Conditions: 150 mM KOAc, 10 mM MgCl2 and 150 mM bicine (pH 8.5), 24 C. The record gives the reactivity of an RNA of 177 nucleotides to 2A3 and DMS. For DMS, 15,998 sequencing reads were counted. In probing experiments dimethyl sulfate is read out at A N1 and C N3, which are open when not base-paired.

RNA sequence: GGGAACGACUCGAGUAGAGUCGAAAAUUUUGGUCGAGAGCUCUGCACCUCAAUUGGUGUAGAGUAUAGAAAUAACGUUCUUCUAGACGAGAUUAUCUUAGACAUAGCACCUGGGAUCAAUUUGCUAUAUUAAAUGGUAUUUCGAUACCAUUUAAUAAAAAGAAACAACAACAACAAC
Reactivity to 2A3 in 0.01 (KOAc 150mM, MgCl2 10mM, bicine 150mM(pH8.5), 24C), signal-to-noise 4, nucleotides 027 to 126: u040u040u010u100g090g010u020c020g030a010g000a010g160c000u010c000u020g000c000a010c010c010u080c110a200a300u210u140g000g000u010g000u000a010g000a000g000u000a000u000a000g000a000a050a010u090a070a040c040g030u050u030c030u110u030c090u120a070g020a060c020g020a010g000a080u080u060a100u130c010u020u080a070g020a040c020a050u060a030g020c000a030c040c020u040g100g000g010a060u050c030a040a090u080u090u100g020c000u080a060
Reactivity to DMS in 0.01 (KOAc 150mM, MgCl2 10mM, bicine 150mM(pH8.5), 24C), signal-to-noise 9, nucleotides 027 to 126: u000u000u000u000g010g010u000c010g010a110g030a190g000c000u000c010u010g000c000a000c000c000u000c240a110a130u010u000g000g020u000g010u000a010g000a010g020u000a020u010a050g000a040a050a070u010a070a090c100g010u010u000c030u000u010c150u010a130g000a040c030g000a060g010a060u000u000a080u000c020u000u000a100g010a070c060a060u000a060g010c040a060c080c030u000g010g010g000a080u010c070a040a060u000u000u000g000c040u010a110